Chemical mapping of a 207-nucleotide RNA with 2A3 and DMS. For DMS, 3,561 sequencing reads were counted. High 2A3 reactivity points to a flexible backbone, as in loops and unpaired stretches. Reactivities are given for positions 27 through 156. DMS adducts were read by reverse transcription with MarathonRT. The reactions ran in a buffer of 150 mM KOAc, 10 mM MgCl2 and 150 mM bicine (pH 8.5), at 24 C.
RNA sequence: GGGAACGACUCGAGUAGAGUCGAAAAGGUGCGCGGGGCGGCCUACACCCAUUCGCACACCAGGGACCAACCACCAGGAGGUAUCUCGUGGAGCUGAAUAGCACCCCGGCGGCUGACGACGGCCAGGAGCGCGUCGACACCGAGCAGCCCGUCGUCGGAAACUGGUAUAAUUCGUUAUACCAGUUUCAAAAGAAACAACAACAACAAC
Reactivity to 2A3 in 0.01 (KOAc 150mM, MgCl2 10mM, bicine 150mM(pH8.5), 24C), signal-to-noise 3, nucleotides 027 to 156: g030g000u060g020c030g020c030g020g010g010g010c090g020g010c030c010u040a050c090a040c040c010c010a030u040u050c020g020c010a010c000a010c020c030a020g010g000g000a020c020c030a060a100c020c030a080c040c000a060g010g040a050g010g000u060a070u030c010u010c010g080u040g000g050a150g030c080u110g060a060a060u100a120g020c020a090c010c010c000c000g020g040c020g020g010c040u090g000a030c000g000a000c000g020g000c010c020a050g110g050a150g030c110g010c010g100u070c030g050a130c020a060c120c060g020a060g020c010a010g010c010c030c030g010u010c010g020u000c010g010
Reactivity to DMS in 0.01 (KOAc 150mM, MgCl2 10mM, bicine 150mM(pH8.5), 24C), signal-to-noise 2, nucleotides 027 to 156: g000g070u000g020c000g050c070g040g000g000g000c060g050g030c070c060u020a110c030a110c050c010c030a180u010u000c010g020c020a040c020a020c030c010a160g000g020g010a090c010c050a150a080c020c010a130c060c070a110g000g050a280g010g020u000a120u010c030u010c020g020u000g020g010a130g000c030u020g000a080a140u000a090g010c020a070c030c000c000c050g020g020c000g040g010c070u000g010a080c020g010a020c000g000g000c050c030a170g020g010a190g020c030g020c080g000u000c020g000a140c040a130c300c000g000a090g000c020a160g000c060c000c030g030u010c000g030u000c030g010